[RMDB]
RNA sequence: GGGAACGACUCGAGUAGAGUCGAAAAGAGGCUGAGGCUGGAGCAUCACUGCAAAUUUGAGGCCAGGAUGGUCAACAAAUAAGUCCCAGAGCUGGCAUAGAGGAACUCUGUCUCAACAAUAAAGAGAUCAAGGGGAUCGAUUCGUCGAUCCCCUUGAAAAAGAAACAACAACAACAAC
Reactivity to DMS in 0.01 (KOAc 150mM, MgCl2 10mM, bicine 150mM(pH8.5), 24C), signal-to-noise 2, nucleotides 027 to 126: g030a110g000g030c100u020g000a080g000g010c040u040g000g000a110g020c110a100u010c060a110c030u000g000c040a030a080a080u000u010u010g000a240g000g000c000c000a040g010g000a140u010g000g000u000c110a110a020c030a030a080a070u040a100a090g000u010c070c020c010a060g000a130g000c040u010g000g020c090a050u010a090g010a030g020g040a140a300c030u010c020u000g000u000c010u000c000a000a100c110a040a100u040a050a050a110g000a090g000a140
Reactivity to 2A3 in 0.01 (KOAc 150mM, MgCl2 10mM, bicine 150mM(pH8.5), 24C), signal-to-noise 3, nucleotides 027 to 126: g080a020g030g040c030u040g050a020g020g010c070u120g040g030a010g000c040a070u080c010a050c050u120g050c070a080a080a000u070u080u190g130a060g020g020c000c000a000g040g090a030u040g000g030u000c060a030a000c000a020a180a080u190a180a020g000u050c040c000c000a000g030a020g040c000u000g010g000c000a040u100a090g070a060g030g070a060a090c000u000c000u000g020u000c000u030c020a060a010c000a020a020u240a220a100a030g090a010g000a070

An RNA of 177 nucleotides, treated with DMS and 2A3 and read out base by base.
2A3 adducts were read by reverse transcription with SuperScript II with manganese.
The reactions ran in a buffer of 150 mM KOAc, 10 mM MgCl2 and 150 mM bicine (pH 8.5), at 24 C.
Reactivities are given for positions 27 through 126.
The 2A3 profile rests on 1,297 reads.
The DMS profile rests on 2,454 reads.
The data come from the RNA Mapping Database (RMDB), library OK1LIB.